[RMDB]
RNA sequence: GGGAACGACUCGAGUAGAGUCGAAAACGCCAGUGGCAUGUGAUGCGUACGUUAUGUGCGGACUCGCAUCCUAUAAGCGUAGAUGCGAUGCUCGUAGAUGUGCAGGUGAGUAUCCCUGGUCCUAGCAUCUAGGCUUGGGGUUCGCUCCAAGUCUAGAAAAAGAAACAACAACAACAAC
Reactivity to 2A3 in 0.01 (KOAc 150mM, MgCl2 10mM, bicine 150mM(pH8.5), 24C), signal-to-noise 3, nucleotides 027 to 126: c100g000c000c000a030g100u190g140g000c180a060u070g090u130g080a120u170g010c000g010u060a050c000g040u140u140a090u280g100u060g020c000g020g020a030c020u000c020g000c010a010u030c000c030u110a110u060a130a120g100c200g150u130a050g040a110u080g000c000g040a060u250g000c030u000c010g020u080a090g010a250u090g030u030g000c010a010g000g060u070g020a060g020u050a050u050c010c000c010u000g000g000u000c010c000u020a040g010c020a070